Notes: The data come from the RNA Mapping Database (RMDB), library TTRINS. Structure probing data (2A3 and DMS) for a 177-nucleotide construct. For DMS, 3,301 sequencing reads were counted. DMS adducts were read by reverse transcription with MarathonRT. The RNA was probed in 150 mM KOAc, 10 mM MgCl2 and 150 mM bicine (pH 8.5) at 24 C. The 2A3 profile rests on 6,428 reads.
[RMDB]
RNA sequence: GGGAACGACUCGAGUAGAGUCGAAAAGAUAUGGAUCUCCCAGCAUUCCUUGGACCUUCUUUCUCGAUUCGCUCGGAAACGAGCGACAGGAUUGACAGAAGCUAGGAAUGCUGGAGAUCCUAAGUCACAUAUCAACAUGCUUCGGCAUGUUGAUAUGAAAAGAAACAACAACAACAAC
Reactivity to 2A3 in 0.01 (KOAc 150mM, MgCl2 10mM, bicine 150mM(pH8.5), 24C), signal-to-noise 3, nucleotides 027 to 126: g030a030u100a050u200g020g000a010u010c000u070c080c090c000a000g000c000a000u010u010c000c000u090u200g280g140a300c040c020u010u010c010u020u110u000c070u010c080g300a300u240u010c010g000c010u000c020g000g030a050a080a070c020g000a000g010c020g000a000c000a020g080g070a280u080u170g020a010c040a020g020a050a000g070c010u020a020g000g010a000a000u000g000c000u000g000g000a000g000a000u010c000c000u000a040a000g020u050c000a000
Reactivity to DMS in 0.01 (KOAc 150mM, MgCl2 10mM, bicine 150mM(pH8.5), 24C), signal-to-noise 3, nucleotides 027 to 126: g010a050u010a300u010g000g000a010u000c010u020c180c040c060a010g010c010a010u000u000c000c010u000u000g040g020a220c300c030u000u010c010u000u000u000c020u000c050g000a260u010u000c020g000c000u000c000g020g000a120a100a210c000g000a010g000c010g010a020c300a040g020g000a040u000u000g000a060c260a020g000a060a040g020c020u000a030g000g000a010a010u000g020c000u000g010g010a010g000a010u010c000c000u000a010a090g000u010c030a250